RNA sequence: GGGAACGACUCGAGUAGAGUCGAAAAGCUAUGUUAUGAUGGUACGGCACAUCAUAGUGUUAGCAGACAUCCUAACACACAUAGACGCCGUAGUGUUCUGUUGUGGUCUACAGCACAACAACCUGAGGAUGUCUGCUCAGGUGAACACAGAUGUAGACGUAGGUAGCAAGUUCGCUUGCUACCUACGAAAAGAAACAACAACAACAAC
Reactivity to 2A3 in 0.01 (KOAc 150mM, MgCl2 10mM, bicine 150mM(pH8.5), 24C), signal-to-noise 3, nucleotides 027 to 156: g080c040u060a040u190g060u150u030a030u050g010a000u020g000g030u080a010c020g000g000c020a000c000a010u000c030a020u020a040g100u140g020u070u100a000g030c000a000g040a020c010a040u020c000c010u080a100a010c040a010c000a000c000a130u080a220g150a110c070g020c020c070g020u000a080g030u040g070u130u070c060u070g000u000u010g000u000g000g000u020c000u030a000c020a010g000c010a030c000a030a020c010a020a070c020c020u020g020a010g050g020a030u100g020u060c070u060g060c000u030c000a020g050g000u090g090a060a020c150a000c000a080g000a090u020g000u020a050g010a010
Reactivity to DMS in 0.01 (KOAc 150mM, MgCl2 10mM, bicine 150mM(pH8.5), 24C), signal-to-noise 1, nucleotides 027 to 156: g040c070u000a020u030g040u000u000a020u000g030a080u000g000g000u030a020c000g000g020c040a200c000a050u000c020a070u010a020g030u030g000u000u000a030g010c030a120g000a100c130a080u010c000c010u000a100a060c110a050c080a160c090a210u000a080g070a210c130g030c010c050g020u010a080g020u000g040u010u010c060u000g000u010u000g000u000g000g010u000c020u040a080c130a100g000c030a120c040a060a040c070a140a060c040c020u000g000a000g010g030a110u010g010u010c070u000g000c000u000c050a010g030g040u010g020a130a050c030a040c070a100g040a030u000g010u000a060g020a100
Notes:
An RNA of 207 nucleotides, treated with 2A3 and DMS and read out base by base. Values cover nucleotides 27 to 156. For DMS, 1,921 sequencing reads were counted. The reactions ran in a buffer of 150 mM KOAc, 10 mM MgCl2 and 150 mM bicine (pH 8.5), at 24 C.